[RMDB]
RNA sequence: GGGAACGACUCGAGUAGAGUCGAAAAGCUUCAGUGCAGGCAAGGGGUUUCGACCCCUUGCCGUACUGACGCCCGAAUCCUGAUUCCUUGCGAAUCCGUGUUCGGGGCCCCGAUUGGCUUCGGCCCGGUAGUAUUACACGUUCGCGUGUAAUACUACAAAAGAAACAACAACAACAAC
Reactivity to 2A3 in 0.01 (KOAc 150mM, MgCl2 10mM, bicine 150mM(pH8.5), 24C), signal-to-noise 2, nucleotides 027 to 126: g010c000u050u030c000a000g020u010g000c040a100g130g000c000a000a010g030g070g030g000u040u140u200c230g090a050c000c000c000c000u020u000g000c000c000g000u000a000c000u000g000a000c020g040c010c000c010g010a010a010u060c000c000u010g000a020u020u040c030c050u190u300g080c080g050a000a010u000c010c030g000u030g000u000u010c000g020g020g050g000c000c000c000c000g150a220u040u230g020g010c030u000u020c120g090g020c000c010c000g020
Reactivity to DMS in 0.01 (KOAc 150mM, MgCl2 10mM, bicine 150mM(pH8.5), 24C), signal-to-noise 3, nucleotides 027 to 126: g020c090u010u000c000a010g020u000g010c020a090g040g010c010a020a000g050g000g010g030u000u010u010c200g000a050c000c000c000c000u000u000g010c000c000g000u000a000c000u000g000a020c150g010c000c000c030g020a010a020u000c180c000u000g000a010u000u000c000c010u010u010g010c140g000a020a010u000c000c090g000u000g010u000u000c000g000g000g000g000c070c050c030c090g010a120u010u010g010g020c040u000u010c150g020g010c000c000c260g000
Conditions: 150 mM KOAc, 10 mM MgCl2 and 150 mM bicine (pH 8.5), 24 C. An RNA of 177 nucleotides, treated with 2A3 and DMS and read out base by base. It was measured as part of the RMDB library RFMREP. The 2A3 profile rests on 1,988 reads.